[RMDB]
RNA sequence: GGGAACGACUCGAGUAGAGUCGAAAAUAACUUAUUUAGGUGAGAGUGUUUGUAAUAACUGUUGUUUGGGUUAUGAUCAUGAUUGUAAGCUAAAAAAGAAAUUUGUUCAGGUACCGAAUGAUUAUAUUAAUAACCCUAUGGGUUUUGUUAGUAGUACCAAUAGUACGGCAUUCGUGCCGUACUAUUGAAAAGAAACAACAACAACAAC
Reactivity to 2A3 in 0.01 (KOAc 150mM, MgCl2 10mM, bicine 150mM(pH8.5), 24C), signal-to-noise 2, nucleotides 027 to 156: u050a020a040c050u100u110a000u300u200u190a160g020g000u080g000a020g010a000g000u030g000u060u120u140g030u080a040a090u040a070a110c090u070g030u140u030g030u040u100u010g040g000g020u040u090a030u040g050a050u020c030a010u060g090a070u120u150g030u120a060a080g010c090u140a110a000a000a000a040a000g120a080a120a220u110u090u040g030u020u070c010a020g000g010u020a060c030c010g030a030a010u000g000a030u000u110a070u030a040u170u170a030a100u060a050a000c010c090c020u030a120u090g010g000g000u040u010u070u010g020u010u020a030g020u000a000g070u080a120c080
Reactivity to DMS in 0.01 (KOAc 150mM, MgCl2 10mM, bicine 150mM(pH8.5), 24C), signal-to-noise 1, nucleotides 027 to 156: u010a090a110c020u010u000a120u010u000u010a080g020g070u010g000a070g020a010g040u010g020u000u000u000g020u010a110a090u010a100a090c020u010g000u000u000g010u020u010u010g000g040g040u000u010a030u000g020a050u010c080a060u010g010a080u000u000g000u000a020a040g030c030u020a010a030a040a130a080a070g010a120a060a080u000u010u000g020u000u010c030a070g040g020u000a080c010c050g010a090a040u000g000a140u000u000a100u000a070u030u000a030a070u010a030a050c000c000c030u000a170u000g040g020g010u000u000u000u000g010u020u010a080g020u000a040g000u000a120c070